[RMDB]
RNA sequence: GGGAACGACUCGAGUAGAGUCGAAAACAAGUCCGUUCGCGGACUUGAAAAAGAUAUGGAUUGGGCUCAGCUUGGAUUUAUGUCAGGAUCGGAAACGAUCCUGAGCAUUGUCAGCUGAGCCAAUCCUAAGUCAAAAACGACAUCUUCGGAUGUCGAACUUUGUAACUAGAUUCGUCUAGUUACAAAGAAAAGAAACAACAACAACAAC
Reactivity to DMS in 0.01 (KOAc 150mM, MgCl2 10mM, bicine 150mM(pH8.5), 24C), signal-to-noise 3, nucleotides 027 to 156: c010a020a020g000u000c000c000g010u000u020c290g020c040g030g000a010c000u000u000g000a040a060a060a140a190g000a120u000a250u000g010g010a040u000u000g010g040g020c000u010c000a000g000c010u010u000g040g010a050u010u000u000a010u020g020u000c020a010g010g000a000u000c000g010g010a180a090a250c000g020a010u000c000c010u000g000a030g020c020a010u000u010g010u000c010a060g000c000u000g000a010g000c010c010a000a000u000c010c000u000a020a110g000u000c060a050a080a080a130a150c010g000a020c000a000u000c010u000u000c300g050g010a020u000g000u000c010g000a030a040
Reactivity to 2A3 in 0.01 (KOAc 150mM, MgCl2 10mM, bicine 150mM(pH8.5), 24C), signal-to-noise 9, nucleotides 027 to 156: c000a000a000g000u010c010c010g030u060u100c300g030c020g110g000a000c000u000u000g010a010a000a000a010a000g060a030u090a040u110g020g000a010u010u030g180g140g070c000u000c000a010g010c030u110u190g160g020a100u290u300u110a030u080g030u030c000a000g000g000a000u000c000g030g010a040a070a060c010g000a000u000c000c000u000g000a000g000c000a000u010u010g030u020c020a000g000c000u000g010a000g000c000c000a000a000u000c000c000u000a010a000g010u010c040a030a010a020a060a090c010g010a000c000a010u020c000u050u060c240g120g000a000u000g000u000c010g000a000a010
Background
This 207-nucleotide RNA was probed chemically with DMS and 2A3. It was measured as part of the RMDB library RNAMAK. For DMS, 10,482 sequencing reads were counted. For DMS the reverse transcriptase was MarathonRT. Reactivities are given for positions 27 through 156. Reactivities are rounded to 0.1 and cut off at 0 and 3.